The data come from the RNA Mapping Database (RMDB), library OK3TST. The record gives the reactivity of an RNA of 207 nucleotides to DMS and 2A3. 2A3 adducts were read by reverse transcription with SuperScript II with manganese. For 2A3, 5,036 sequencing reads were counted.
[RMDB]
RNA sequence: GGGAACGACUCGAGUAGAGUCGAAAAUUUGGAUACAAACAAUAUGUGAUGGCAAUAAGGAAAGUCACGUUCAUCAGGCUAUGCUUCUGGGCGUUAUCACAAGCUAGGAUGGAGGGAAUCAAAGUGGUACCGAAGAUAAUGUUACAAUUCCUAGACGUACUAGGACUGAAUUCGUUCAGUCCUAGUAAAAAGAAACAACAACAACAAC
Reactivity to DMS in 0.01 (KOAc 150mM, MgCl2 10mM, bicine 150mM(pH8.5), 24C), signal-to-noise 4, nucleotides 027 to 156: u000u000u010g020g010a160u000a120c070a080a050a100c070a080a130u010a090u010g000u000g010a050u000g010g010c020a070a120u000a110a080g010g000a080a060a150g010u000c060a050c040g030u000u000c050a070u000c030a060g010g010c020u000a070u020g010c030u000u000c020u000g020g020g020c060g010u010u000a070u000c040a070c050a030a120g020c030u000a080g020g010a070u000g020g020a110g000g010g000a080a070u000c040a060a060a120g020u000g010g010u000a060c040c030g000a050a090g020a080u000a080a090u000g010u000u000a060c080a050a140u000u000c010c010u010a080g020a120c110g000
Reactivity to 2A3 in 0.01 (KOAc 150mM, MgCl2 10mM, bicine 150mM(pH8.5), 24C), signal-to-noise 5, nucleotides 027 to 156: u080u050u070g070g010a050u090a120c100a050a070a020c030a050a090u080a060u180g040u030g030a050u020g050g030c040a060a080u090a120a070g060g010a110a060a010g030u070c030a020c120g040u080u060c030a090u030c020a010g060g000c030u100a030u160g020c010u060u030c030u060g060g000g000c020g030u060u030a050u100c020a030c010a080a030g020c010u040a040g040g000a020u050g010g020a030g020g020g020a030a020u090c040a080a000a050g040u040g030g000u040a060c020c040g020a020a010g010a030u130a120a050u130g060u040u020a030c050a090a090u040u010c000c000u030a040g020a080c040g020